[RMDB]
RNA sequence: GGGAACGACUCGAGUAGAGUCGAAAACAGUGCCAUGGGAAGUGGGCCAAAGACAAGGCUACGUUGAUUUCGAACAGAUUUCGACAACCAUAGACUGGGCAACGAUGCCGGUGUCGCUGACAUCUGAAAUGCCAUGGGAUCACGGAAAGCAGGCACCCUUACUAAAUCAGUUCGCUGAUUUAGUAAGAAAAGAAACAACAACAACAAC
Reactivity to 2A3 in 0.01 (KOAc 150mM, MgCl2 10mM, bicine 150mM(pH8.5), 24C), signal-to-noise 9, nucleotides 027 to 156: c040a010g020u030g050c020c040a100u060g020g010g040a100a040g060u080g020g030g000c030c010a100a100a000g090a060c070a050a090g010g010c020u080a050c080g010u010u020g030a090u030u040u030c030g020a090a050c090a210g060a080u040u040u020c010g010a010c000a060a030c010c020a030u070a050g090a070c080u070g000g010g020c010a040a040c080g050a060u100g030c010c020g030g030u040g010u030c070g020c150u070g030a030c000a040u010c030u070g050a060a080a050u080g000c030c030a020u040g030g010g030a050u100c030a010c040g020g040a050a040a020g070c040a050g010g020c010a020c010c000
Reactivity to DMS in 0.01 (KOAc 150mM, MgCl2 10mM, bicine 150mM(pH8.5), 24C), signal-to-noise 4, nucleotides 027 to 156: c030a060g030u010g000c020c010a130u020g000g010g000a150a140g020u000g020g010g010c020c030a060a080a110g020a090c080a070a140g020g010c010u000a100c130g030u000u000g010a080u000u000u010c020g010a090a160c150a230g010a130u000u000u000c000g010a080c040a060a080c020c040a080u000a090g010a080c040u000g010g010g020c030a040a100c100g000a100u000g020c030c010g010g030u000g030u000c090g000c050u000g010a030c050a050u000c030u000g010a080a110a120u000g020c000c010a060u000g010g020g040a060u000c040a060c020g000g000a090a050a110g000c050a080g010g000c010a030c020c050